[RMDB]
RNA sequence: GGGAACGACUCGAGUAGAGUCGAAAAUGUCCUUGGCAGCUGAAGGACACCUUGACUUCCAGCUUUUACGAGUGAGCCAAAAACAGAAGGACAAGUACAACUGUGCUGGCCUGCUGUACAAGCUUCACCGGAGAAUUAGAUUCGUCUAAUUCUCCGGAAAAGAAACAACAACAACAAC
Reactivity to DMS in 0.01 (KOAc 150mM, MgCl2 10mM, bicine 150mM(pH8.5), 24C), signal-to-noise 3, nucleotides 027 to 126: u010g010u000c010c010u000u010g010g030c040a060g000c060u020g010a040a030g020g020a030c030a110c160c020u000u000g040a090c140u010u000c040c030a050g000c030u000u000u000u000a050c100g020a080g030u010g010a120g030c020c030a010a070a130a100a020c040a020g010a020a150g000g010a100c080a050a100g000u000a090c020a110a300c140u000g000u010g010c130u000g000g010c010c020u000g000c010u000g000u010a030c060a150a120g000c010u000u000c150a130
Reactivity to 2A3 in 0.01 (KOAc 150mM, MgCl2 10mM, bicine 150mM(pH8.5), 24C), signal-to-noise 3, nucleotides 027 to 126: u070g000u000c010c000u010u030g100g000c090a130g010c080u140g050a030a000g020g010a010c000a030c020c020u100u160g100a090c020u100u050c040c020a010g000c010u010u030u040u140a050c080g060a020g020u040g020a010g010c020c000a040a030a030a040a000c010a020g020a050a020g060g040a040c070a150a040g020u060a060c080a250a060c140u150g000u000g010c030u010g000g000c010c000u020g000c000u000g000u010a010c000a030a030g020c040u100u110c080a040